RNA sequence: GGGAACGACUCGAGUAGAGUCGAAAACUGUCAGCCUCCGGGGCAACGCCUUGAAUUUGGAGAGCCUGGGAAUGUAACAAGGGGUAGGGAAAAUAACGAGAGCUGAGUUGGCUUCUCCUGUGCUGUUCCUGAGCUGUGGAACUUGCAAUCGCAGUCGGAUUGGCGGUAAGUUCGCUUACCGCCAAUCAAAAGAAACAACAACAACAAC
Reactivity to 2A3 in 0.01 (KOAc 150mM, MgCl2 10mM, bicine 150mM(pH8.5), 24C), signal-to-noise 1, nucleotides 027 to 156: c030u020g020u020c000a000g030c040c020u000c070c080g000g040g000g000c050a040a030c100g030c000c020u090u090g050a130a110u110u080u210g000g000a010g000a020g010c040c030u050g050g000g030a080a120u110g020u120a100a080c070a120a000g000g010g040g010u060a110g060g010g050a040a020a000a150u180a090a100c100g010a000g000a000g060c010u040g010a020g060u090u010g060g030c000u130u010c000u020c000c010u040g000u050g010c040u040g010u000u000c020c020u050g010a050g070c100u050g000u000g030g000a000a070c040u060u070g030c050a050a090u090c050g000c000a000g050u020c010g160